[RMDB]
RNA sequence: GGGAACGACUCGAGUAGAGUCGAAAAGUGCGCACUAUUGAGAUGGCGCAAGGGCAAAAAGUCAGUCGGUUUGUGGCCUGGACGUUCCUGACGCCCGAGCAGCAAGCCGCGUGGGUUGCAGAGCGCAAUCACCGUAGGUGUUCGCACCUACGGUGAUAAAAGAAACAACAACAACAAC
Reactivity to 2A3 in 0.01 (KOAc 150mM, MgCl2 10mM, bicine 150mM(pH8.5), 24C), signal-to-noise 3, nucleotides 027 to 126: g060u050g000c020g020c020a040c080u050a120u120u300g110a170g020a100u100g060g000c020g000c030a030a040g030g000g000c040a100a060a000a060a000g110u110c040a020g070u140c020g030g000u000u030u030g020u040g040g010c000c000u010g000g000a010c010g000u100u060c040c090u140g030a010c020g010c000c000c000g010a020g000c010a000g000c010a000a010g010c010c000g030c030g020u080g030g040g010u020u050g000c020a030g030a020g120c030g000c020a030
Reactivity to DMS in 0.01 (KOAc 150mM, MgCl2 10mM, bicine 150mM(pH8.5), 24C), signal-to-noise 5, nucleotides 027 to 126: g020u010g010c030g020c020a100c060u000a300u010u010g010a110g010a130u000g010g020c030g010c040a040a120g000g010g010c050a050a040a090a100a080g010u010c090a090g020u010c010g020g010u000u000u010g020u010g010g020c010c000u010g010g000a030c010g010u000u000c190c200u020g000a090c030g010c000c000c000g010a050g010c020a100g010c020a010a060g010c010c010g010c050g020u000g010g010g000u000u010g010c020a070g010a180g020c050g030c100a100
The record gives the reactivity of an RNA of 177 nucleotides to 2A3 and DMS. DMS adducts were read by reverse transcription with MarathonRT. For 2A3 the reverse transcriptase was SuperScript II with manganese. The RNA was probed in 150 mM KOAc, 10 mM MgCl2 and 150 mM bicine (pH 8.5) at 24 C. The 2A3 profile rests on 4,077 reads. It was measured as part of the RMDB library OK2TST.